[RMDB]
RNA sequence: GGGAACGACUCGAGUAGAGUCGAAAAGAACGGGAGUGCCGUUCCUGCAUUAAGGGGCUUAUGCCGUCUCUGUGGAAUGGCAUUGAGGACCAGUGCAAAAGUCAAAGACGAUGUCCAUGGGGAUAAACAUAUGAGUGGACUUCGGUCCACUCAUAUGAAAAGAAACAACAACAACAAC
Reactivity to 2A3 in 0.01 (KOAc 150mM, MgCl2 10mM, bicine 150mM(pH8.5), 24C), signal-to-noise 6, nucleotides 027 to 126: g060a020a010c040g010g010g020a090g040u090g060c010c000g000u000u010c010c000u060g060c010a090u090u160a120a080g040g000g020g020c020u160u110a080u290g050c030c010g060u020c020u000c010u060g050u080g030g010a060a050u040g000g000c010a000u050u080g050a090g020g050a040c010c010a010g000u030g010c010a010a060a050a030g030u060c060a120a080a070g040a030c050g050a040u110g040u040c000c000a060u070g020g010g010g010a030u080a080a130a020
Reactivity to DMS in 0.01 (KOAc 150mM, MgCl2 10mM, bicine 150mM(pH8.5), 24C), signal-to-noise 5, nucleotides 027 to 126: g010a120a100c080g010g000g010a090g020u020g000c060c010g020u000u000c000c000u010g020c080a030u050u020a090a060g010g010g000g010c030u030u040a070u020g030c040c060g010u000c000u000c090u020g030u000g000g000a030a020u010g010g000c040a010u000u010g000a130g000g020a200c040c010a100g000u000g020c060a030a050a090a110g000u010c040a080a130a160g010a050c040g000a090u020g000u000c040c030a030u000g000g010g020g010a090u010a090a110a200
Structure probing data (2A3 and DMS) for a 177-nucleotide construct. For DMS the reverse transcriptase was MarathonRT. The DMS profile rests on 11,194 reads. For 2A3, 5,662 sequencing reads were counted.